[RMDB]
RNA sequence: GGGAACGACUCGAGUAGAGUCGAAAAGUGCAAUGUCUGUGGCAUAAAAGAUGUUGUUCUACAAGGCUUAAAAGCUUGUUGUUACGUGGGUGUGCAAACUGUUGAAGAUCUGCGUGCUCGCAUGACACAUACGGUUGUAGUUCGCUACAACCGUAUGAAAAGAAACAACAACAACAAC
Reactivity to 2A3 in 0.01 (KOAc 150mM, MgCl2 10mM, bicine 150mM(pH8.5), 24C), signal-to-noise 3, nucleotides 027 to 126: g040u040g020c030a020a060u070g040u030c030u090g130u100g120g070c030a030u130a120a130a000a010g020a050u040g010u030u000g010u010u020c000u010a040c010a050a030g060g000c000u080u200a020a120a030a000g060c000u020u050g010u020u010g010u030u010a020c030g000u000g000g040g000u040g010u000g020c000a000a000a080c040u060g080u200u230g120a050a030g000a110u040c010u040g000c010g030u000g020c020u000c000g000c000a020u060g000a000c010a000
Reactivity to DMS in 0.01 (KOAc 150mM, MgCl2 10mM, bicine 150mM(pH8.5), 24C), signal-to-noise 3, nucleotides 027 to 126: g020u000g020c020a040a040u000g010u000c030u010g020u010g000g020c090a090u000a060a090a110a060g000a060u000g020u000u000g010u000u000c020u000a050c060a020a050g010g010c020u000u010a070a080a120a250g000c030u000u010g000u000u010g000u000u000a030c130g040u000g010g020g000u000g000u010g020c020a030a030a080c030u010g000u030u010g000a170a050g000a130u000c100u000g010c010g020u000g010c030u000c010g010c020a130u010g010a010c030a120